[RMDB]
RNA sequence: GGGAACGACUCGAGUAGAGUCGAAAAGCAACGGGAGGGAGGCCGGAAGCGCGAACCGGCCAAACGCGCACGAUGGAAAGAGCACAAAAAGAAGUUGAAGUGCUCACAACUUCACCCUCCCAACAAAUGACGUGAGUAAAUUCGUUUACUCACGUCAAAAAGAAACAACAACAACAAC
Reactivity to DMS in 0.01 (KOAc 150mM, MgCl2 10mM, bicine 150mM(pH8.5), 24C), signal-to-noise 1, nucleotides 027 to 126: g010c080a160a060c130g020g030g040a040g000g020g000a150g000g060c010c030g000g000a080a070g000c070g020c020g050a090a080c010c000g000g000c030c000a030a010a040c080g020c050g000c030a080c090g000a200u000g000g020a050a070a100g000a020g020c040a020c020a010a070a070a100a100g000a110a100g000u000u000g000a060a070g000u000g000c000u020c000a130c040a040a060c120u010u010c000a090c000c000c000u000c000c030c000a020a010c100a010a140a120
Reactivity to 2A3 in 0.01 (KOAc 150mM, MgCl2 10mM, bicine 150mM(pH8.5), 24C), signal-to-noise 1, nucleotides 027 to 126: g060c040a020a100c090g010g030g000a010g020g000g000a040g070g030c030c000g000g020a090a020g070c080g000c020g130a040a050c000c000g030g010c030c010a040a020a000c050g000c030g010c010a020c110g020a020u060g060g030a130a110a060g010a010g010c060a020c040a050a140a050a040a080g210a090a040g060u060u040g070a200a060g040u010g000c000u020c000a020c020a010a010c040u090u090c000a080c010c000c000u000c020c000c000a000a000c010a000a000a000

Source: RMDB library M2PK90, as collected in RNAgym. This 177-nucleotide RNA was probed chemically with DMS and 2A3. The RNA was probed in 150 mM KOAc, 10 mM MgCl2 and 150 mM bicine (pH 8.5) at 24 C.